[RMDB]
RNA sequence: GGGAACGACUCGAGUAGAGUCGAAAAAAGGAAUUAGCGUGCCUUCAUGCUAAGGGUUUGAUAUCUGGUAAAACCCGGUGCAUUCAUCAAUGCAGGUUAAGCCAAAGGGAUGUCCCGACCGGAGGCCAAAAGUUCGCUACGUUCGCGUAGCGAACAACGUUUUGUACACCUUCGGGUGUACAAAACGAAAAGAAACAACAACAACAAC
Reactivity to DMS in 0.01 (KOAc 150mM, MgCl2 10mM, bicine 150mM(pH8.5), 24C), signal-to-noise 1, nucleotides 027 to 156: a060a050g020g000a050a150u010u000a030g010c080g000u020g000c010c020u030u000c020a070u010g000c040u100a300a140g000g000g010u000u000u000g020a150u000a030u010c120u000g030g000u020a060a050a000a030c000c000c030g000g000u000g000c050a050u000u010c090a110u000c040a070a230u000g000c010a100g040g040u000u010a140a110g000c000c030a050a300a300g010g050g000a120u000g000u000c000c020c010g000a070c050c020g030g010a300g000g060c000c070a010a080a080a050g000u000u000c000g030c000u000a000c010g030u000u000c300g030c040g020u000a020g010c000g020a000a000c000a010a040
Reactivity to 2A3 in 0.01 (KOAc 150mM, MgCl2 10mM, bicine 150mM(pH8.5), 24C), signal-to-noise 2, nucleotides 027 to 156: a000a000g160g040a110a070u110u040a090g010c060g040u030g030c040c030u070u100c030a000u050g010c000u130a040a050g000g010g030u010u020u040g080a080u140a170u280c250u230g080g000u050a040a040a000a000c000c000c000g010g030u010g000c000a020u030u160c030a080u070c080a170a120u130g020c040a050g000g100u120u140a110a000g010c000c000a030a000a000g000g000g020a020u050g070u020c040c010c000g000a020c010c030g000g000a000g050g000c000c000a040a090a000a040g000u000u000c000g000c010u000a050c000g040u010u030c230g000c020g090u000a000g000c010g000a000a010c000a030a000

The data come from the RNA Mapping Database (RMDB), library M2RFPK. Chemical mapping of a 207-nucleotide RNA with DMS and 2A3. DMS adducts were read by reverse transcription with MarathonRT. The RNA was probed in 150 mM KOAc, 10 mM MgCl2 and 150 mM bicine (pH 8.5) at 24 C.